[RMDB]
RNA sequence: GGGAACGACUCGAGUAGAGUCGAAAAUUCUGACACCAUUCCUGAUGAGAAACAGAAUGGUCACAGUUUAUAUCUAGCAGACAAUUUGACUGCUGAUGAAACAAAGGCGCUUAAAGAGUUAUAUGGCAUGGAUAGUACUUCGGUACUAUCAAAAGAAACAACAACAACAAC
Reactivity to DMS in 0.01 (KOAc 150mM, MgCl2 10mM, bicine 150mM(pH8.5), 24C), signal-to-noise 9, nucleotides 027 to 129: u010u010c000u000g030a110c160a070c020c030a020u010u010c130c090u000g020a070u010g000a150g040a160a120a120c030a000g010a040a030u020g000g000u010c130a200c120a070g000u000u000u000a080u050a100u040c040u040a030g020c000a000g010a130c040a160a170u030u080u020g020a060c000u000g000c020u040g000a010u020g010a050a040a030c070a060a100a100g000g000c040g000c070u040u020a060a060a070g010a070g000u000u010a060u000a040u000g010g020c030a060u000g040
Reactivity to 2A3 in 0.01 (KOAc 150mM, MgCl2 10mM, bicine 150mM(pH8.5), 24C), signal-to-noise 9, nucleotides 027 to 129: u030u000c010u020g030a020c010a000c060c000a010u010u010c050c040u030g040a100u070g080a080g120a070a130a010c020a010g000a010a000u010g000g010u030c040a040c010a050g000u010u070u020a240u020a010u040c110u120a000g000c010a000g060a170c060a200a270u150u200u260g100a100c030u000g000c000u000g020a020u020g020a010a040a010c040a020a070a010g090g000c040g000c060u070u110a070a100a010g090a020g020u120u030a130u030a040u130g040g010c030a030u060g070
An RNA of 170 nucleotides, treated with DMS and 2A3 and read out base by base.
For 2A3 the reverse transcriptase was SuperScript II with manganese.
The DMS profile rests on 86,929 reads.
The data come from the RNA Mapping Database (RMDB), library 15KLIB.
The RNA was probed in 150 mM KOAc, 10 mM MgCl2 and 150 mM bicine (pH 8.5) at 24 C.
Reactivities are given for positions 27 through 129.